[RMDB]
RNA sequence: GGGAACGACUCGAGUAGAGUCGAAAAGAAACAGGCCGAAGGAAAUAUGGCGAAACGGCCUGACAAGGCUCGUAAAGAAAAGACGCCAUAUAGAAAAGAAAGAAUGAGCCAAACGCCAUAUUUCAAAGCCCAUUUAUAGUUUCGACUAUAAAUGGGCAAAAGAAACAACAACAACAAC
Reactivity to 2A3 in 0.01 (KOAc 150mM, MgCl2 10mM, bicine 150mM(pH8.5), 24C), signal-to-noise 2, nucleotides 027 to 126: g030a000a130a000c010a010g000g040c000c000g020a050a030g130g000a010a040a000u000a000u000g010g010c010g050a070a030a010c000g010g000c000c000u010g000a040c030a000a070g010g000c010u000c010g060u090a000a230a000g080a090a120a000a000g090a010c020g060c030c000a000u020a030u060a100g130a030a140a000a000g030a000a170a000g120a010a020u070g020a020g000c030c000a000a000a060c000g000c000c000a000u000a020u000u000u000c000a010a020a000
Reactivity to DMS in 0.01 (KOAc 150mM, MgCl2 10mM, bicine 150mM(pH8.5), 24C), signal-to-noise 2, nucleotides 027 to 126: g000a120a100a300c010a000g030g000c000c000g020a110a100g040g000a000a000a000u000a000u010g000g010c010g000a030a090a140c020g000g010c010c000u000g000a020c110a040a140g000g010c010u020c010g010u010a040a110a140g020a080a060a100a150g010a040c090g010c060c030a110u060a120u020a070g000a010a160a000a060g000a140a040a080g000a080a080u010g000a000g000c010c000a080a120a130c020g010c000c010a000u000a000u000u000u000c000a090a090a150
Annotation: Chemical mapping of a 177-nucleotide RNA with 2A3 and DMS. The 2A3 profile rests on 2,510 reads. The reactions ran in a buffer of 150 mM KOAc, 10 mM MgCl2 and 150 mM bicine (pH 8.5), at 24 C. DMS adducts were read by reverse transcription with MarathonRT.